Conditions: 150 mM KOAc, 10 mM MgCl2 and 150 mM bicine (pH 8.5), 24 C.
This 177-nucleotide RNA was probed chemically with 2A3 and DMS.
For DMS, 8,660 sequencing reads were counted.
Reactivities are given for positions 27 through 126.
In probing experiments dimethyl sulfate is read out at A N1 and C N3, which are open when not base-paired.
DMS adducts were read by reverse transcription with MarathonRT.

[RMDB]
RNA sequence: GGGAACGACUCGAGUAGAGUCGAAAACUUCUGUAGGCCCCUCCUCCAUCGGUGCCUGGCACUGAUCCCACCAGCCACAGGCCACACACAUACCCUAGGGGAUGUGGGAAGGUGGAUAGAUGCUGGGCGGAGAACUAUAUUUCGAUAUAGUUCUCCGAAAAGAAACAACAACAACAAC
Reactivity to 2A3 in 0.01 (KOAc 150mM, MgCl2 10mM, bicine 150mM(pH8.5), 24C), signal-to-noise 4, nucleotides 027 to 126: c010u120u070c070u180g250u240a160g110g120c020c010c000c010u000c000c000u020c010c000a060u060c020g040g050u090g010c020c060u050g040g030c010a000c030u030g060a060u070c020c010c010a030c010c000a000g090c000c030a100c040a050g190g000c030c000a040c000a000c000a010c000a020u290a300c000c010c040u090a110g090g060g010g010a000u020g020u020g000g100g030a080a050g080g010u010g000g010a010u040a030g060a030u040g000c000u000g030g020g000
Reactivity to DMS in 0.01 (KOAc 150mM, MgCl2 10mM, bicine 150mM(pH8.5), 24C), signal-to-noise 6, nucleotides 027 to 126: c070u010u000c090u010g020u000a080g010g000c020c010c010c020u000c020c010u010c010c040a070u010c100g010g020u000g020c010c040u000g020g010c020a040c030u000g010a090u010c090c010c010a070c020c010a100g010c020c050a120c130a100g010g010c010c060a060c050a200c040a020c050a040u000a090c010c000c020u010a160g030g010g000g000a030u000g000u000g000g000g010a100a090g010g010u000g000g020a060u000a090g000a110u010g010c010u000g000g010g010